[RMDB]
RNA sequence: GGGAACGACUCGAGUAGAGUCGAAAAAGAAAUGGAGGAAUUUCCCCAUAACGCCGGUGAAACUCUUGGAAGCGGAAGAAGGAAGGCGGAGAAAAGGAGCGGGCCCUCCGAUCCGAGGGGCCCGACGAAGCUAUCAUGUUCGCAUGAUAGAAAAGAAACAACAACAACAAC
Reactivity to 2A3 in 0.01 (KOAc 150mM, MgCl2 10mM, bicine 150mM(pH8.5), 24C), signal-to-noise 9, nucleotides 027 to 129: a000g110a010a070a020u130g020g010a030g030g040a050a040u020u030u040c020c000c000c010a050u100a130a040c070g030c050c020g020g000u100g040a100a030a040c040u050c010u080u090g030g020a030a020g060c030g040g000a010a020g010a010a000g020g010a000a010g010g000c020g030g010a020g000a010a060a000a010g080g020a080g030c020g000g000g000c010c010c000u030c010c010g040a100u050c040c030g010a070g010g010g000g000c000c010c000g000a010c020g020a020a000g040
Reactivity to DMS in 0.01 (KOAc 150mM, MgCl2 10mM, bicine 150mM(pH8.5), 24C), signal-to-noise 7, nucleotides 027 to 129: a010g010a080a080a050u010g030g030a000g000g000a070a090u020u020u010c020c010c020c140a070u010a060a050c130g040c070c040g000g050u010g030a080a070a070c080u030c040u000u000g010g030a050a120g010c130g050g000a040a010g000a050a060g010g010a010a010g020g020c080g000g010a020g020a020a040a060a080g010g030a100g020c080g000g000g000c020c010c000u000c040c050g000a110u060c120c090g010a090g010g010g010g010c000c000c000g000a000c070g010a100a080g040